[RMDB]
RNA sequence: GGGAACGACUCGAGUAGAGUCGAAAAAUUUGACUAAACAAACUAUGGCUGCUGGCCCGCAUAGUCUUAGCUACACUUUAACAUCUGCAGGCCUUGAAGUGCACAUUACUUCUGCCGGGCUCGACUGCGAUGUAAACGCAUUCGUGCGUUUACAUCGAAAAGAAACAACAACAACAAC
Reactivity to DMS in 0.01 (KOAc 150mM, MgCl2 10mM, bicine 150mM(pH8.5), 24C), signal-to-noise 2, nucleotides 027 to 126: a080u000u010u010g000a090c020u000a090a120a070c020a090a030a090c100u010a060u000g000g020c030u000g030c070u010g000g000c030c020c070g020c050a080u000a020g010u000c040u010u010a060g030c030u000a040c080a040c060u000u010u010a040a060c030a040u000c070u020g010c050a080g010g000c070c110u050u010g040a000a020g030u010g010c150a040c180a060u010u010a050c040u000u000c070u000g000c120c040g000g020g020c000u000c070g010a060c090u000g020